Structure probing data (2A3) for a 207-nucleotide construct.

RNA sequence: GGGAACGACUCGAGUAGAGUCGAAAAGCGUGAUGAAGCGGUAUGUAAGCAUGUAGUGCGUGGGUGGCUUGCACUAUAAUCUCAGACAUCAAAAGUUUAAUUGGCGAAAAUAACUACGCUCUCGCUGCGUAAUCGAAGAAUAGUAGAUUAGACGCUUACUAUUCAUGAGCUUCGGCUCAUGAAUAGUAAAAGAAACAACAACAACAAC
Reactivity to 2A3 in 0.01 (KOAc 150mM, MgCl2 10mM, bicine 150mM(pH8.5), 24C), signal-to-noise 2, nucleotides 027 to 156: g010c050g040u070g040a120u050g020a130a010g010c020g070g030u080a030u090g040u070a050a020g080c060a050u060g060u170a010g000u000g000c010g000u030g020g020g010u020g030g020c000u010u040g060c010a000c010u070a090u010a210a070u010c030u000c010a000g020a030c000a020u000c000a060a090a020a040g050u060u120u120a100a120u100u060g010g000c020g030a040a000a030a110u110a040a040c020u020a040c070g020c030u000c010u000c030g040c060u110g000c020g010u010a010a010u030c020g010a010a020g020a080a050u110a040g030u010a000g000a000u000u030a060g070a050c010g000c000u010u020
About this RNA
Source: RMDB library RSTRND, as collected in RNAgym. Reactivities are rounded to 0.1 and cut off at 0 and 3. The reactions ran in a buffer of 150 mM KOAc, 10 mM MgCl2 and 150 mM bicine (pH 8.5), at 24 C. The 2A3 profile rests on 1,350 reads.